[RMDB]
RNA sequence: GGGAACGACUCGAGUAGAGUCGAAAACUCUGCUAAUUCGUUAGCAGAGGUACACUGGGACGGGACGGGAGGGGGAUACUCGCGGUCCCAAGAAGAAUCCAGCAAGCACAUUAUUCGUAAUGUGCAACGAUACAUACUGCUUCGGCAGUAUGUAUCGAAAAGAAACAACAACAACAAC
Reactivity to DMS in 0.01 (KOAc 150mM, MgCl2 10mM, bicine 150mM(pH8.5), 24C), signal-to-noise 4, nucleotides 027 to 126: c000u000c000u000g010c000u000a010a020u000u010c190g000u000u000a000g000c000a000g020a020g020g000u010a070c130a140c040u010g000g020g000a090c110g020g020g030a080c040g000g000g010a300g000g000g000g020g010a110u010a030c010u000c020g010c070g010g010u000c000c010c010a060a070g010a060a110g000a070a080u000c030c020a090g010c210a090a140g010c010a010c000a010u010u000a040u000u000c200g030u000a000a000u000g000u000g000c000a040a090
Reactivity to 2A3 in 0.01 (KOAc 150mM, MgCl2 10mM, bicine 150mM(pH8.5), 24C), signal-to-noise 4, nucleotides 027 to 126: c000u000c000u000g000c000u010a020a030u070u050c210g080u080u000a000g010c000a000g010a000g000g000u020a040c090a030c040u020g000g020g130a040c060g030g050g050a030c050g040g040g050a180g050g050g000g000g020a030u080a120c010u010c020g060c030g060g070u000c000c000c000a000a010g030a010a000g020a020a080u020c020c000a010g050c080a120a040g020c000a000c000a000u000u030a020u060u120c190g050u040a000a020u010g000u000g000c000a000a010

Structure probing data (DMS and 2A3) for a 177-nucleotide construct. Values are in units of 0.01, from 0 to 300, in steps of 10. For DMS, 3,696 sequencing reads were counted. Conditions: 150 mM KOAc, 10 mM MgCl2 and 150 mM bicine (pH 8.5), 24 C.